[RMDB]
RNA sequence: GGGAACGACUCGAGUAGAGUCGAAAAGAUAUGGAGAGCUCAGAGAUGCAGCUCUCGGAAACGAGUUGCUGAACUACAUCGACGAAGAGCUCUCCUAAGUCAAAAGAGAAGGGUUCGCCCUUCUCAAUCUAAUCGAAAACUUCGGUUUUCGAUUAGAAAAAGAAACAACAACAACAAC
Reactivity to 2A3 in 0.01 (KOAc 150mM, MgCl2 10mM, bicine 150mM(pH8.5), 24C), signal-to-noise 2, nucleotides 027 to 126: g000a000u010a000u040g000g000a000g000a000g040c010u000c020a010g000a000g020a020u170g300c000a000g010c000u000c000u010c020g000g010a000a020a000c010g010a030g030u300u110g060c000u010g000a110a080c080u300a220c300a100u020c010g300a300c040g020a180a020g000a000g000c000u000c000u000c000c000u000a000a000g000u000c020a030a000a040a130g000a000g000a000a000g020g020g040u070u140c260g120c010c010c010u020u020c010u020c000a000a000
Reactivity to DMS in 0.01 (KOAc 150mM, MgCl2 10mM, bicine 150mM(pH8.5), 24C), signal-to-noise 2, nucleotides 027 to 126: g000a030u000a130u000g000g000a020g000a000g020c000u000c000a050g020a070g020a010u000g020c060a000g010c000u000c000u000c000g010g000a000a020a060c010g000a040g020u010u020g000c020u020g010a220a140c300u000a110c080a020u000c010g010a190c200g000a100a070g000a010g000c000u000c000u000c000c000u000a000a050g000u020c020a080a030a090a170g020a020g010a020a010g000g000g020u000u020c300g000c000c000c000u010u000c000u000c000a030a090
The record gives the reactivity of an RNA of 177 nucleotides to 2A3 and DMS.
The data come from the RNA Mapping Database (RMDB), library TTRDEL.
For 2A3 the reverse transcriptase was SuperScript II with manganese.
Conditions: 150 mM KOAc, 10 mM MgCl2 and 150 mM bicine (pH 8.5), 24 C.
The DMS profile rests on 1,453 reads.
For 2A3, 2,040 sequencing reads were counted.
DMS adducts were read by reverse transcription with MarathonRT.